Background: The record gives the reactivity of an RNA of 177 nucleotides to DMS. The RNA was probed in 150 mM KOAc, 10 mM MgCl2 and 150 mM bicine (pH 8.5) at 24 C. The DMS profile rests on 1,068 reads.
RNA sequence: GGGAACGACUCGAGUAGAGUCGAAAAUCAGAAGGUAUGAGCUGUAGACCGAGACAGGCUUUGAGCUCUCUAGCUGAAUCCUAGCUAUCCUGAGCAUAGCUAGCAGGACAAGUUUGGACGGGUCUGCGACGGCAAUGUACUUCGGUACAUUGCCGUCAAAAGAAACAACAACAACAAC
Reactivity to DMS in 0.01 (KOAc 150mM, MgCl2 10mM, bicine 150mM(pH8.5), 24C), signal-to-noise 1, nucleotides 027 to 126: u020c010a030g030a110a080g000g020u020a070u020g000a070g040c050u000g000u000a070g020a050c020c030g010a150g000a210c160a070g020g000c060u000u040u010g010a010g010c010u000c130u000c060u020a020g010c020u000g000a040a150u000c100c020u010a010g010c020u000a050u000c050c150u030g010a160g000c170a070u000a060g020c000u010a040g020c100a050g000g000a050c070a000a030g010u000u000u010g010g020a150c180g010g000g000u000c020u000g010c200